Chemical mapping of a 177-nucleotide RNA with DMS and 2A3.
For 2A3, 986 sequencing reads were counted.
For DMS, 2,120 sequencing reads were counted.
Values cover nucleotides 27 to 126.
2A3 adducts were read by reverse transcription with SuperScript II with manganese.
RNA sequence: GGGAACGACUCGAGUAGAGUCGAAAAGUUACAUUGGCGAAGUCUGCCCAAAAAACUGUAUAACUAGAAAAAAUGAGAGAAGCAUGGAGUCACGCAAUCGGUUUGUAUAGUGCUAAAUUAGUAUUAUAGAACGACUUAAGUUCGCUUAAGUCGUUCUAAAAGAAACAACAACAACAAC
Reactivity to DMS in 0.01 (KOAc 150mM, MgCl2 10mM, bicine 150mM(pH8.5), 24C), signal-to-noise 2, nucleotides 027 to 126: g010u010u010a060c080a080u000u050g040g010c040g010a100a120g000u020c030u010g070c000c000c050a000a010a050a060a060a030c010u000g000u000a050u030a040a050c050u000a070g020a030a010a040a010a080a140u050g010a090g000a020g000a090a060g000c060a060u000g000g000a050g000u020c070a050c090g000c050a020a060u010c140g000g010u020u000u000g020u000a060u020a050g010u020g000c030u000a040a110a070u010u020a030g000u010a030u000u000a020u000
Reactivity to 2A3 in 0.01 (KOAc 150mM, MgCl2 10mM, bicine 150mM(pH8.5), 24C), signal-to-noise 2, nucleotides 027 to 126: g050u030u030a100c060a080u090u130g020g000c060g070a090a000g000u000c000u030g040c000c000c000a050a230a030a050a000a000c090u080g020u050a080u080a200a220c160u080a070g220a030a090a020a020a060a110u250g000a110g000a020g000a010a010g000c010a000u080g010g130a040g030u010c000a000c040g050c020a010a010u040c040g030g040u000u000u100g040u010a120u010a020g040u000g020c020u060a030a030a030u080u040a010g010u030a020u150u000a030u040